Structure probing data (DMS and 2A3) for a 177-nucleotide construct. The data come from the RNA Mapping Database (RMDB), library M2PK90.
RNA sequence: GGGAACGACUCGAGUAGAGUCGAAAAUAACAGGAGAGUAGAUGAUUCGCGUUAAGUGUGUGUGAAUGGGAUGUCGUCACACAACGAAGCGAGAGGGCGGUGAAUCAUUGCAUCCGCUCCAAAACAACAUCGAAAACUAGUUCGCUAGUUUUCGAUGAAAAGAAACAACAACAACAAC
Reactivity to DMS in 0.01 (KOAc 150mM, MgCl2 10mM, bicine 150mM(pH8.5), 24C), signal-to-noise 5, nucleotides 027 to 126: u020a090a110c230a120g000g000a020g000a040g000u020a300g010a030u000g000a030u000u010c000g010c000g030u010u000a080a100g010u000g010u000g020u000g000u000g000a040a040u000g000g020g000a030u000g010u000c250g000u000c000a010c000a010c010a040a030c030g030a160a110g020c030g010a110g000a070g000g010g020c020g000g010u000g000a040a020u000c040a050u000u000g010c040a030u000c000c000g010c010u000c000c000a040a040a060a070c240a050a120
Reactivity to 2A3 in 0.01 (KOAc 150mM, MgCl2 10mM, bicine 150mM(pH8.5), 24C), signal-to-noise 3, nucleotides 027 to 126: u090a030a020c030a010g010g010a010g010a000g020u040a000g010a020u010g010a010u020u010c010g010c020g050u110u150a190a050g040u110g000u010g010u000g000u000g130a030a030u020g010g010g000a010u030g050u090c080g020u000c000a010c000a000c000a010a040c020g070a130a020g050c010g070a060g070a020g080g120g000c040g000g000u030g020a000a020u020c020a030u000u050g010c000a010u000c000c000g000c010u000c000c000a020a030a010a020c030a000a030
Notes:
2A3 adducts were read by reverse transcription with SuperScript II with manganese. The reactions ran in a buffer of 150 mM KOAc, 10 mM MgCl2 and 150 mM bicine (pH 8.5), at 24 C.